[RMDB]
Overview: Structure probing data (2A3 and DMS) for a 177-nucleotide construct. For 2A3, 1,805 sequencing reads were counted. For 2A3 the reverse transcriptase was SuperScript II with manganese. Reactivities are given for positions 27 through 126. The DMS profile rests on 1,547 reads. The RNA was probed in 150 mM KOAc, 10 mM MgCl2 and 150 mM bicine (pH 8.5) at 24 C. For DMS the reverse transcriptase was MarathonRT.
RNA sequence: GGGAACGACUCGAGUAGAGUCGAAAAGCCAUGGGACAGGACCUUAAAUUCGGAGGAUUCGUCCUUAAAUCGUUCCUCCAAGGGUCCUCUCCCCAAUCCCUUACUUAAUAAGUUGGAUCGGCGAGUGCCUACAGUCUUACUUCGGUAAGACUGUAGGAAAAGAAACAACAACAACAAC
Reactivity to 2A3 in 0.01 (KOAc 150mM, MgCl2 10mM, bicine 150mM(pH8.5), 24C), signal-to-noise 2, nucleotides 027 to 126: g000c020c030a070u130g010g000g000a030c030a020g030g010a000c000c000u020u040a030a080a030u150u170c300g010g010a010g000g030a060u160u100c020g020u120c010c030u020u170a070a130a010u070c000g020u030u000c020c010u020c030c010a010a000g000g000g000u000c010c010u000c000u000c000c000c030c000a020a070u050c000c000c000u020u050a060c030u100u120a120a110u080a300a040g050u100u110g000g050a060u040c040g010g000c060g070a050g070u120g070
Reactivity to DMS in 0.01 (KOAc 150mM, MgCl2 10mM, bicine 150mM(pH8.5), 24C), signal-to-noise 2, nucleotides 027 to 126: g020c030c030a170u020g030g000g030a050c150a020g000g020a000c010c000u000u000a230a020a200u000u000c020g010g020a050g000g000a020u020u020c030g000u010c140c130u020u000a060a100a120u000c020g000u000u000c000c000u000c020c010a020a060g000g030g000u000c000c000u010c110u000c030c000c020c300a060a080u000c000c000c040u000u000a030c110u000u000a040a130u000a060a050g010u000u000g010g000a100u000c150g000g020c010g010a090g020u010g010